The record gives the reactivity of an RNA of 177 nucleotides to DMS.
Values are in units of 0.01, from 0 to 300, in steps of 10.

RNA sequence: GGGAACGACUCGAGUAGAGUCGAAAAGAUAUGGAGUUGGACUGCCUUAUGAACUGCAGGGAGCUAUGUGGUCGGAAACGACCACCUAGCAUCGAUCUGUUUCAUAAGGCAGUCCAACUCCUAAGUCCAAUAUCGAACCGUUCGCGGUUCGAUAUUGAAAAGAAACAACAACAACAAC
Reactivity to DMS in 0.01 (KOAc 150mM, MgCl2 10mM, bicine 150mM(pH8.5), 24C), signal-to-noise 2, nucleotides 027 to 126: g000a090u010a300u000g000g010a030g000u010u010g000g000a030c020u000g020c000c010u010u010a010u000g000a010a060c300u000g010c020a010g000g010g000a050g040c000u000a000u000g010u000g000g000u000c000g010g000a090a100a150c020g010a030c000c000a010c020c030u000a010g000c000a240u000c220g030a050u000c010u000g010u000u020u000c010a000u000a000a010g030g010c010a000g010u000c000c000a010a010c000u000c010c000u000a000a050g000u010c040
Source: RMDB library TTRINS, as collected in RNAgym. The RNA was probed in 150 mM KOAc, 10 mM MgCl2 and 150 mM bicine (pH 8.5) at 24 C. For DMS, 1,974 sequencing reads were counted.